[RMDB]
RNA sequence: GGGAACGACUCGAGUAGAGUCGAAAAAAAUUAAAGUAUAUUGCACAUGUGGUGAACAAGGUCACAUUCACUGAGCAGUGCUAUUAUGUCCUUGGAGAUGAGUGUUCAGACUAUGCCCGAUUCCGAAGGUUUUACGGUGAUUCGUCACCGUAAAACCAAAAGAAACAACAACAACAAC
Reactivity to DMS in 0.01 (KOAc 150mM, MgCl2 10mM, bicine 150mM(pH8.5), 24C), signal-to-noise 1, nucleotides 027 to 126: a020a070a090u020u040a040a030a110g010u020a050u010a030u000u000g020c020a060c040a030u000g040u020g000g030u000g000a020a040c100a060a070g000g010u030c070a010c100a170u000u020c020a010c060u000g010a180g010c050a050g000u000g000c030u000a120u000u000a020u010g010u000c000c000u000u000g000g010a070g040a050u000g010a050g010u000g000u010u000c070a140g000a060c050u000a050u010g000c020c000c000g000a120u010u000c010c000g000a170a120
Conditions: 150 mM KOAc, 10 mM MgCl2 and 150 mM bicine (pH 8.5), 24 C.
Structure probing data (DMS) for a 177-nucleotide construct.
For DMS the reverse transcriptase was MarathonRT.
Values cover nucleotides 27 to 126.